[RMDB]
RNA sequence: GGGAACGACUCGAGUAGAGUCGAAAAGCACCGAGGAGUUAAGAGAGCCGCAAGCGCAGGGAAGGCCUCCCCGCACGGGUGGGGGAAAGCGGCCGGUGCAGCGCGGGGACAGGCACUCGGGCUGGCACCCGAUAGGUCUAUUCGUAGACCUAUCGGGAAAAGAAACAACAACAACAAC
Reactivity to 2A3 in 0.01 (KOAc 150mM, MgCl2 10mM, bicine 150mM(pH8.5), 24C), signal-to-noise 7, nucleotides 027 to 126: g010c010a100c130c010g000a010g030g020a190g020u110u120a240a070g130a020g010a010g120c000c000g000c040a100a090g010c030g000c050a020g040g070g140a140a060g030g000c000c000u020c000c000c000c010g100c020a100c230g250g110g020u100g010g010g000g000g030a060a080a010g090c040g000g000c000c010g000g020u040g010c030a040g020c020g000c000g020g000g000g020a030c020a070g010g040c010a000c010u000c000g000g000g010c030u030g030g010c030a030
Reactivity to DMS in 0.01 (KOAc 150mM, MgCl2 10mM, bicine 150mM(pH8.5), 24C), signal-to-noise 5, nucleotides 027 to 126: g000c000a120c030c020g000a030g000g030a120g030u010u010a100a090g010a080g000a300g000c030c030g040c020a090a300g010c010g020c010a040g040g000g000a060a050g000g010c010c170u000c000c000c000c000g000c030a170c240g040g030g010u000g000g000g000g000g000a010a030a100g000c040g000g010c030c000g000g020u010g020c000a040g000c190g000c010g000g000g010g000a220c300a180g000g000c020a020c020u010c000g000g010g010c020u010g000g040c150a140